[RMDB]
RNA sequence: GGGAACGACUCGAGUAGAGUCGAAAACAUAGCUGACAUCUGAGAUGUACCAGCACGUCAAAUAGCAUACGUGCCAUACUAUCAGAUGAACAGAUGCAUCACGUCAUGAGACACGGCACUCUGACAAGCGUGGUACGAGGUUCGCCUCGUGCCACGCAAAAGAAACAACAACAACAAC
Reactivity to 2A3 in 0.01 (KOAc 150mM, MgCl2 10mM, bicine 150mM(pH8.5), 24C), signal-to-noise 5, nucleotides 027 to 126: c020a040u090a040g070c010u010g000a010c000a000u000c000u000g020a020g030a050u200g000u040a020c090c040a030g000c000a000c000g010u020c070a120a200a300u200a040g170c130a060u040a120c000g000u000g000c020c010a010u020a020c000u000a010u010c020a000g000a010u000g000a020a000c000a010g030a030u140g010c040a090u150c030a010c060g010u020c030a060u250g060a000g000a070c060a030c120g070g010c040a020c040u010c010u010g010a020c030a050a030
Reactivity to DMS in 0.01 (KOAc 150mM, MgCl2 10mM, bicine 150mM(pH8.5), 24C), signal-to-noise 1, nucleotides 027 to 126: c090a190u040a000g110c040u010g000a090c000a000u020c020u000g000a010g000a220u000g000u090a000c130c080a150g000c000a000c000g050u010c210a090a010a300u000a110g080c100a130u040a050c020g000u000g090c000c260a060u040a070c000u000a130u000c000a010g000a000u000g000a040a000c030a040g030a110u000g000c010a040u000c010a150c100g000u060c050a000u230g010a040g000a060c060a120c260g000g040c000a150c040u030c010u030g000a040c050a070a180

The record gives the reactivity of an RNA of 177 nucleotides to 2A3 and DMS. 2A3 adducts were read by reverse transcription with SuperScript II with manganese. For DMS the reverse transcriptase was MarathonRT. The DMS profile rests on 1,117 reads. Source: RMDB library OK1LIB, as collected in RNAgym. Conditions: 150 mM KOAc, 10 mM MgCl2 and 150 mM bicine (pH 8.5), 24 C.